Annotation
Chemical mapping of a 177-nucleotide RNA with 2A3. The RNA was probed in 150 mM KOAc, 10 mM MgCl2 and 150 mM bicine (pH 8.5) at 24 C. The 2A3 profile rests on 939 reads.

RNA sequence: GGGAACGACUCGAGUAGAGUCGAAAAUGGCUGGUGCUACAGGGACCCAGGCUGAUGUGGGCUGGCAUGUGGGGCAGCACCAAGGGCCUGGGCCUGGCCUUGCUCAGUGCCUGGGAGCAGCUGGGCACUGACCUCGAUCCUUCGGGAUCGAGGUCAGAAAAGAAACAACAACAACAAC
Reactivity to 2A3 in 0.01 (KOAc 150mM, MgCl2 10mM, bicine 150mM(pH8.5), 24C), signal-to-noise 1, nucleotides 027 to 126: u170g000g030c070u120g060g120u280g000c010u030a060c030a090g000g010g140a060c000c010c000a000g060g000c030u050g060a290u150g080u050g070g010g060c000u020g100g120c100a090u140g120u220g100g000g120g010c000a010g000c000a080c110c020a000a000g050g000g000c000c000u020g000g000g010c000c000u020g000g000c000c000u030u030g020c000u030c080a010g020u020g000c020c040u170g060g110g060a270g040c030a040g070c030u050g000g010g000c020a030